An RNA of 177 nucleotides, treated with DMS and 2A3 and read out base by base. As a SHAPE reagent, 2A3 marks flexible, mostly unpaired nucleotides at the ribose 2'-OH. For 2A3 the reverse transcriptase was SuperScript II with manganese. It was measured as part of the RMDB library OK1LIB. The DMS profile rests on 4,034 reads.
RNA sequence: GGGAACGACUCGAGUAGAGUCGAAAAGACGGAAAAGAUCGAACCUAAGAAGAUGAGGAAGUGUGAGCCGAAUCCUAGGGCUCCUAGGGACGCAUCGUCCGAUGCGAAAUAAACACUAACGUCGAAACAUGCAUAAUGCCUUCGGGCAUUAUGCAUGAAAAGAAACAACAACAACAAC
Reactivity to DMS in 0.01 (KOAc 150mM, MgCl2 10mM, bicine 150mM(pH8.5), 24C), signal-to-noise 3, nucleotides 027 to 126: g000a060c010g000g030a060a050a130a070g000a060u010c030g000a060a190c080c040u000a060a120g020a130a080g020a020u020g030a120g010g000a100a040g030u000g000u010g010a110g000c050c060g000a090a050u050c020c060u010a060g000g000g000c100u030c000c080u010a050g000g000g010a230c010g000c050a030u000c000g030u050c240c190g000a000u010g000c000g000a040a060a060u040a090a110a050c040a020c030u000a090a170c010g000u030c020g020a220a110a110
Reactivity to 2A3 in 0.01 (KOAc 150mM, MgCl2 10mM, bicine 150mM(pH8.5), 24C), signal-to-noise 3, nucleotides 027 to 126: g000a020c010g110g070a000a150a040a060g020a100u080c060g010a050a090c030c000u040a070a050g060a030a100g020a110u130g010a070g100g060a080a100g010u060g030u070g100a000g090c060c130g080a080a010u000c000c000u020a010g080g080g040c020u050c010c010u020a020g000g000g010a020c010g000c010a000u040c010g190u080c100c130g010a000u010g010c000g060a000a080a000u080a010a060a000c010a010c060u020a060a000c020g030u000c000g010a040a040a000